[RMDB]
RNA sequence: GGGAACGACUCGAGUAGAGUCGAAAACUAUUGAAUUUUCUACUUCAACUCAAGAAUCUUCCAGUAUUGGACCUUCUUCAUCUAGUUCCAUCGGUUCAUGUACUAGUAGCUCAAUCUCAACUGAAGAGAGUGGGUGACCAUUCGUGGUCACCCACUCAAAAGAAACAACAACAACAAC
Reactivity to 2A3 in 0.01 (KOAc 150mM, MgCl2 10mM, bicine 150mM(pH8.5), 24C), signal-to-noise 2, nucleotides 027 to 126: c080u080a100u180u300g060a060a040u000u070u000u000c010u090a070c030u010u050c060a130a040c020u000c040a020a030g010a070a090u020c000u010u000c010c020a020g100u080a200u070u090g050g040a010c010c000u170u130c000u060u070c020a050u000c060u080a030g070u060u090c040c050a030u010c100g000g050u000u090c080a030u070g000u000a030c010u000a080g150u070a020g020c000u030c070a070a140u040c050u000c030a020a090c030u110g060a150a000g060a050